[RMDB]
RNA sequence: GGGAACGACUCGAGUAGAGUCGAAAAUGCAAAGGCAGAAGGGAGCUUGACUGCAAGACCCACCCGUCGAGCAGGGACGAAAGUCGGCCUUAGUGAUCCGACGGUGCCGAGUGGAAGGGCCGUCGCUCAACGGAUAAAAGUUACUCUAGGGAUAACACAUAAUAAUUUGCUUCGGCAAAUUAUUAUGAAAAGAAACAACAACAACAAC
Reactivity to DMS in 0.01 (KOAc 150mM, MgCl2 10mM, bicine 150mM(pH8.5), 24C), signal-to-noise 3, nucleotides 027 to 156: u010g040c040a050a120a110g030g040c010a100g010a090a100g000g020g010a110g020c030u000u020g010a120c040u010g020c060a100a130g000a130c030c000c030a110c090c010c040g000u000c020g010a130g010c040a120g000g010g010a040c030g020a120a080a150g010u000c010g010g010c050c010u000u010a080g020u010g000a100u000c030c000g000a030c000g020g010u000g020c040c010g010a160g040u000g010g030a220a170g010g010g010c000c000g010u000c040g010c060u020c010a090a090c030g020g000a120u000a020a060a090a100g000u010u010a030c050u000c060u010a090g010g030g010a080u000a060a030c040a170
Reactivity to 2A3 in 0.01 (KOAc 150mM, MgCl2 10mM, bicine 150mM(pH8.5), 24C), signal-to-noise 6, nucleotides 027 to 156: u100g000c030a050a050a060g050g010c030a020g030a130a070g070g030g010a060g030c010u060u050g070a090c030u030g020c020a020a020g020a070c000c010c010a030c020c020c010g010u020c020g000a010g000c010a020g030g050g010a020c030g070a140a040a020g060u040c000g040g000c000c000u050u050a050g030u050g080a090u050c030c020g010a000c010g030g000u140g240c010c010g020a070g110u180g060g100a100a080g010g010g000c000c000g000u010c000g000c020u010c010a030a050c020g020g000a010u120a100a080a010a010g030u060u060a030c020u030c060u130a050g000g050g040a060u100a150a020c070a000